[RMDB]
RNA sequence: GGGAACGACUCGAGUAGAGUCGAAAAGUCGUGCGCAACCUGCAGGCCGGUGGUCACCAGGUGCUGCUCGUCGGCGACGGCGUCAACGACGCUCCCGCCAUGGCCGCCGCCCGCGCCGCUGUCGCCAGGUCUCUCUGACUUUCGAGUCAGAGAGACCAAAAGAAACAACAACAACAAC
Reactivity to 2A3 in 0.01 (KOAc 150mM, MgCl2 10mM, bicine 150mM(pH8.5), 24C), signal-to-noise 1, nucleotides 027 to 126: g040u020c010g050u040g030c040g000c040a160a260c070c070u100g040c060a070g000g000c020c070g020g010u030g000g030u040c000a030c100c050a140g040g090u060g030c040u010g040c020u060c020g080u040c070g020g050c000g030a050c020g080g050c000g020u070c050a100a070c030g010a000c010g000c010u050c020c020c030g010c060c020a090u110g020g000c030c000g020c020c010g000c040c020c020g000c000g000c010c010g010c010u030g040u040c030g050c050c040a030
Reactivity to DMS in 0.01 (KOAc 150mM, MgCl2 10mM, bicine 150mM(pH8.5), 24C), signal-to-noise 1, nucleotides 027 to 126: g000u000c020g060u000g010c040g020c050a100a080c070c040u010g040c150a080g010g020c080c020g030g000u000g000g030u020c020a110c130c100a080g020g040u000g000c040u000g010c020u000c060g000u000c090g030g000c030g000a030c050g000g010c030g010u000c190a070a170c040g000a020c010g020c130u000c000c020c010g000c090c170a080u000g020g040c000c000g000c000c040g000c060c000c040g030c020g000c050c030g000c000u010g010u000c010g010c010c010a160
The record gives the reactivity of an RNA of 177 nucleotides to 2A3 and DMS.
For DMS, 957 sequencing reads were counted.
2A3 is a SHAPE reagent: it acylates the 2'-hydroxyl of flexible nucleotides of all four kinds.
The reactions ran in a buffer of 150 mM KOAc, 10 mM MgCl2 and 150 mM bicine (pH 8.5), at 24 C.
The 2A3 profile rests on 1,383 reads.